[RMDB]
RNA sequence: GGGAACGACUCGAGUAGAGUCGAAAAGUGAUCGGAGGAGGCCUAGGGGGCUGUGUGGUUCCCUAUCUUCAAAAGUGGAGGGACCCCAAAGUGAUCUUCUGCACUCUCUUUGAUGAACGAGAGCGGAGUGGGUGUAGGUUUUCGAACCUACACCCACAAAAGAAACAACAACAACAAC
Reactivity to DMS in 0.01 (KOAc 150mM, MgCl2 10mM, bicine 150mM(pH8.5), 24C), signal-to-noise 2, nucleotides 027 to 126: g040u000g070a190u030c040g010g040a300g030g000a080g000g000c030c140u000a080g000g000g040g030g020c010u000g060u050g000u020g000g030u000u000c000c000c020u000a000u010c040u050u000c260a050a070a130a140g020u000g000g020a040g010g000g040a120c030c020c070c120a020a170a180g000u000g020a070u000c020u000u000c000u000g000c000a020c000u000c000u010c030u000u020u000g050a140u010g000a240a000c080g000a030g020a030g040c000g020g010a210
Reactivity to 2A3 in 0.01 (KOAc 150mM, MgCl2 10mM, bicine 150mM(pH8.5), 24C), signal-to-noise 2, nucleotides 027 to 126: g050u040g010a030u040c010g030g000a010g010g030a100g030g010c000c050u040a030g010g000g020g000g000c070u050g040u060g070u140g090g020u050u090c030c000c010u060a140u120c020u080u020c040a110a080a050a010g070u130g030g030a170g050g030g000a010c000c000c000c000a030a160a000g030u060g100a240u030c020u050u010c000u090g000c000a050c010u000c010u010c000u100u030u200g270a300u140g030a090a000c090g000a100g000a010g180c070g010g030a020
Description:
Chemical mapping of a 177-nucleotide RNA with DMS and 2A3. DMS adducts were read by reverse transcription with MarathonRT. The DMS profile rests on 1,514 reads. Conditions: 150 mM KOAc, 10 mM MgCl2 and 150 mM bicine (pH 8.5), 24 C.